[RMDB]
RNA sequence: GGGAACGACUCGAGUAGAGUCGAAAAGAUAUGGACUACCCACCAUAAGAACUACAAGCCUAUAUCGGAAACGAUAUGCGCUUGCUUAUGAGGUCCUAAGUCAAACAACCCUGUUCGCAGGGUUGAAGACGUAUCGUUUGUUCGCAAACGAUACGUCAAAAGAAACAACAACAACAAC
Reactivity to DMS in 0.01 (KOAc 150mM, MgCl2 10mM, bicine 150mM(pH8.5), 24C), signal-to-noise 2, nucleotides 027 to 126: g070a160u000a110u000g000g000a010c000u000a050c070c010c020a300c140c000a000u010a000a050g010a020a000c080u030a300c000a010a000g010c030c000u000a060u010a000u010c000g010g030a060a100a150c000g000a020u030a000u000g030c300g000c010u000u010g000c000u000u000a000u000g010a150g010g000u000c020c000u010a090a130g000u010c070a160a060a300c010a000a010c000c010c000u000g050u000u000c260g000c000a010g010g020g000u010u000g000a040a090